[RMDB]
RNA sequence: GGGAACGACUCGAGUAGAGUCGAAAAUUUUUGGCGAAACUUUAAUCUUAGACAGAGCAGGUAAAUCUGACGACAAUCAGUUGCUGUUCCGUGAUGUUGAAGAGACAGUUUCCAUCCCAUUUGAUCACCAGUGAGUUUUAUUCGUAAAACUCACUGGAAAAGAAACAACAACAACAAC
Reactivity to 2A3 in 0.01 (KOAc 150mM, MgCl2 10mM, bicine 150mM(pH8.5), 24C), signal-to-noise 2, nucleotides 027 to 126: u110u110u040u070u100g070g020c100g030a010a010a000c000u060u100u150a170a090u050c000u010u040a030g000a010c030a000g000a010g000c050a040g000g050u100a070a040a090u060c010u020g030a040c070g050a040c040a030a050u030c020a040g010u060u030g040c030u020g040u040u010c040c020g080u060g070a100u130g040u070u030g030a030a000g020a010g000a020c010a020g010u030u000u000c000c010a020u020c030c010c000a010u210u120u130g150a130u130c050a040
Reactivity to DMS in 0.01 (KOAc 150mM, MgCl2 10mM, bicine 150mM(pH8.5), 24C), signal-to-noise 4, nucleotides 027 to 126: u010u010u000u000u000g010g040c160g000a040a030a030c000u000u000u010a160a160u000c030u000u000a290g010a030c010a060g010a150g010c000a030g040g010u010a050a070a040u010c010u010g010a040c110g000a120c300a100a280u000c000a010g010u000u000g010c010u000g020u000u010c030c200g010u020g020a090u000g000u000u020g000a080a080g000a040g000a120c300a020g000u000u000u000c000c020a160u000c020c000c010a110u000u000u010g010a130u000c150a120
Source: RMDB library OK2TST, as collected in RNAgym. This 177-nucleotide RNA was probed chemically with 2A3 and DMS. For DMS the reverse transcriptase was MarathonRT. The reactions ran in a buffer of 150 mM KOAc, 10 mM MgCl2 and 150 mM bicine (pH 8.5), at 24 C. In probing experiments dimethyl sulfate is read out at A N1 and C N3, which are open when not base-paired. The 2A3 profile rests on 2,018 reads.